[RMDB]
RNA sequence: GGGAACGACUCGAGUAGAGUCGAAAACACGCGCGGUGCUGGCGCGACGGCCCUGCGGCGUGACGGUGCGAUCCAUCGGACCAAAACCUUCCUGCUGAUAACCGUUGAGAUCGUCCGUGCGCGGGUAUAAUAUGACGGCAUUCGUGCCGUCAUAUUAAAAAGAAACAACAACAACAAC
Reactivity to DMS in 0.01 (KOAc 150mM, MgCl2 10mM, bicine 150mM(pH8.5), 24C), signal-to-noise 3, nucleotides 027 to 126: c110a120c020g020c020g010c030g030g010u000g010c090u010g020g000c030g020c030g010a050c110g000g020c020c000c000u010g020c030g040g010c020g020u010g010a030c020g010g000u010g010c010g000a020u000c010c010a020u000c030g030g000a210c110c100a050a030a100a110c100c100u000u000c040c050u000g010c100u010g010a090u010a100a140c000c000g000u000u000g000a150g000a020u000c010g030u000c000c000g010u000g010c020g010c000g000g030g000u000a080